[RMDB]
RNA sequence: GGGAACGACUCGAGUAGAGUCGAAAAGGAGUUGCUCAUAUCAUGUGUCAAGAGGACACACUGGCUGGAUGGGAAAACAACAUGUUGAUAAAUGCUAUGUGGGAAGAACUCAUUUUAUCGAGAGUCGACCGUCAUGUGUGUUCGCACACAUGACGGUAAAAGAAACAACAACAACAAC
Reactivity to 2A3 in 0.01 (KOAc 150mM, MgCl2 10mM, bicine 150mM(pH8.5), 24C), signal-to-noise 1, nucleotides 027 to 126: g090g000a080g020u020u030g030c020u020c050a040u080a040u120c040a020u040g020u010g020u020c040a070a150g080a070g300g000a030c010a010c010a000c100u010g050g000c000u000g050g030a080u060g000g000g050a070a110a000a000c030a010a010c030a020u100g110u000u050g100a040u060a170a120a050u080g050c050u070a040u100g020u020g040g030g030a090a020g030a100a020c010u000c030a060u040u040u070u080a080u140c110g020a040g010a010g120u020c070g000
Reactivity to DMS in 0.01 (KOAc 150mM, MgCl2 10mM, bicine 150mM(pH8.5), 24C), signal-to-noise 2, nucleotides 027 to 126: g030g020a090g000u010u000g020c060u000c050a100u000a080u020c080a090u010g010u000g010u010c040a170a100g040a120g020g020a010c020a040c010a070c160u010g020g000c160u030g000g000a070u000g000g010g000a100a100a060a030c080a050a050c100a010u000g010u030u000g000a080u000a060a060a100u000g000c000u000a050u000g010u000g000g000g010a050a100g010a030a020c040u000c030a050u000u000u040u000a100u000c050g000a060g000a060g000u000c060g020
This 177-nucleotide RNA was probed chemically with 2A3 and DMS. Values cover nucleotides 27 to 126. Source: RMDB library OK2TST, as collected in RNAgym. For DMS the reverse transcriptase was MarathonRT. The RNA was probed in 150 mM KOAc, 10 mM MgCl2 and 150 mM bicine (pH 8.5) at 24 C. The 2A3 profile rests on 816 reads. The DMS profile rests on 1,301 reads.